[RMDB]
RNA sequence: GGGAACGACUCGAGUAGAGUCGAAAAGUAGAUUUCGAUCUACAACACGGGGUCUAAUUACAAAGCCCUAGACAUGCUCUGAAGCCUCCACGGAGCAACAGCUAGGGAACUACUUUGUGAUUAGACGGAGGCACCCAAUAUACAAGUUCGCUUGUAAUAGGUUCGAUAAGUUCGCUUAUCGAACCUAAAAAGAAACAACAACAACAAC
Reactivity to 2A3 in 0.01 (KOAc 150mM, MgCl2 10mM, bicine 150mM(pH8.5), 24C), signal-to-noise 2, nucleotides 027 to 156: g060u030a030g000a050u090u070u130c180g030a020u000c000u010a000c020a070a070c090a080c060g110g010g000g000u030c000u000a020a000u000u000a000c000a030a000a040g060c000c000c010u010a010g020a010c110a140u150g000c000u000c000u010g040a110a010g030c000c030u040c000c020a010c000g000g000a000g030c000a020a030c040a040g230c000u000a000g030g010g120a110a050c010u200a050c010u070u000u010g000u000g020a000u000u000a000g000a000c010g060g000a010g000g000c010a030c000c000c000a020a010u220a010u190a110c010a020a030g200u020u090c100g120c200u030u040g020u140a060a070

Conditions: 150 mM KOAc, 10 mM MgCl2 and 150 mM bicine (pH 8.5), 24 C. The record gives the reactivity of an RNA of 207 nucleotides to 2A3. For 2A3 the reverse transcriptase was SuperScript II with manganese. The data come from the RNA Mapping Database (RMDB), library RNAMAK.